[RMDB]
RNA sequence: GGGAACGACUCGAGUAGAGUCGAAAAGGCGGGCCCUGAUGAACCUCAUGGAUCAGGAAGUAGUCCUGCGCUUCAAGGGCUCGGCGACUGGCGAGUACGACGACUACGGCAACGCCGUGACUGGUCCUUCCAGUGACGAGCCGUGGCCGGCGUGGUACUUCGGUUUUAAGUUCGCUUAAAACCGAAGAAAAGAAACAACAACAACAAC
Reactivity to 2A3 in 0.01 (KOAc 150mM, MgCl2 10mM, bicine 150mM(pH8.5), 24C), signal-to-noise 3, nucleotides 027 to 156: g120g020c000g000g010g000c000c000c000u060g120a150u040g020a070a090c020c050u140c070a140u300g060g040a060u110c060a060g040g120a080a090g120u260a010g050u030c010c000u030g030c040g000c050u020u030c050a040a010g000g000g000c000u010c010g000g030c000g030a060c030u040g080g070c010g040a020g050u040a090c010g020a030c000g020a040c100u050a040c060g010g000c000a070a020c020g000c010c010g000u000g000a000c000u000g000g070u210c130c070u200u060c010c000a000g000u010g060a010c000g020a060g040c070c030g010u010g020g010c020c010g000g010c070g010u020g040g000u010a030
Reactivity to DMS in 0.01 (KOAc 150mM, MgCl2 10mM, bicine 150mM(pH8.5), 24C), signal-to-noise 1, nucleotides 027 to 156: g000g000c030g010g040g030c000c000c000u000g020a210u000g030a050a070c030c030u000c080a140u030g030g010a120u000c030a040g000g020a140a180g000u020a100g030u000c000c000u010g050c150g000c050u000u000c070a140a030g020g020g040c000u000c020g010g000c030g010a040c010u000g060g030c080g020a170g050u000a040c000g000a020c020g000a040c010u000a020c040g000g010c000a080a020c060g030c170c000g000u000g030a040c030u000g000g010u000c160c200u000u020c000c010a070g030u020g020a040c030g000a280g000c010c000g060u000g010g020c000c010g000g020c020g020u020g010g010u010a070